[RMDB]
RNA sequence: GGGAACGACUCGAGUAGAGUCGAAAAGAUAUGGACCCGUAGCGGCUGAUGACCUCGGAAACGAGCAAGGCCCUACUGGGUCCUAAGUCAAAAUCAUUCAUCGAGUGUUCGCACUCGAUGAAUGAAACGAUAAGACUGAGUUCGCUCAGUCUUAUCGAAAAGAAACAACAACAACAAC
Reactivity to DMS in 0.01 (KOAc 150mM, MgCl2 10mM, bicine 150mM(pH8.5), 24C), signal-to-noise 6, nucleotides 027 to 126: g000a070u010a300u000g010g000a000c000c000c000g010u000a020g010c210g050g010c010u010g010a090u000g000a110c300c000u000c000g000g000a100a110a160c010g010a010g000c030a070a140g010g020c000c000c000u000a000c010u010g040g000g000u010c000c000u000a000a050g000u000c040a100a070a100a090u010c000a010u000u000c000a000u000c000g000a030g020u000g010u000u000c220g000c000a010c000u000c000g010a000u000g000a000a000u000g000a000a030a090
Reactivity to 2A3 in 0.01 (KOAc 150mM, MgCl2 10mM, bicine 150mM(pH8.5), 24C), signal-to-noise 4, nucleotides 027 to 126: g020a010u050a040u130g000g000a000c010c000c010g000u000a010g040c250g100g010c020u030g030a300u180g050a170c010c010u010c000g000g040a100a070a050c000g000a000g000c020a040a150g000g000c000c000c000u000a010c010u040g000g010g010u000c000c000u010a000a000g010u000c010a020a020a000a240u030c000a010u010u000c000a010u010c000g010a000g000u020g040u120u170c300g060c140a000c000u020c000g000a000u010g000a000a000u000g000a000a000a000